[RMDB]
RNA sequence: GGGAACGACUCGAGUAGAGUCGAAAACUUCGCAACUUCGGUUGCGAAGAAUGGCAGCUCGUCCCGGCGCUGGGUUGGCCGGGUUAUAAAACAUAACACAUCACUGGCUACCAUUCGUGGUAGCCAAAUGGGUAUAGCAAUUCGUUGCUAUACCCAUAAAAGAAACAACAACAACAAC
Reactivity to DMS in 0.01 (KOAc 150mM, MgCl2 10mM, bicine 150mM(pH8.5), 24C), signal-to-noise 3, nucleotides 027 to 126: c010u000u000c010g010c000a000a000c010u010u030c170g040g000u000u000g030c010g000a000a010g010a060a070u000g010g030c150a070g030c020u000c030g020u020c000c000c010g010g010c020g010c170u010g010g030g030u010u000g000g000c000c010g020g000g010u000u010a010u020a030a050a030a030c160a070u000a040a020c050a030c060a050u020c150a100c220u000g000g010c010u000a000c000c010a050u000u000c180g030u010g000g000u000a000g010c000c000a000a010
Reactivity to 2A3 in 0.01 (KOAc 150mM, MgCl2 10mM, bicine 150mM(pH8.5), 24C), signal-to-noise 1, nucleotides 027 to 126: c000u000u010c010g000c020a020a020c010u060u120c190g150g000u000u000g000c000g010a000a000g010a000a010u030g010g010c060a080g050c010u030c020g080u110c030c000c000g000g070c040g010c160u160g090g090g040u090u080g060g020c020c080g020g000g000u010u120a140u050a010a020a060a010c070a070u160a070a020c060a000c000a100u120c010a000c130u060g000g000c000u000a000c000c000a020u040u040c220g090u030g000g000u000a000g050c000c000a000a000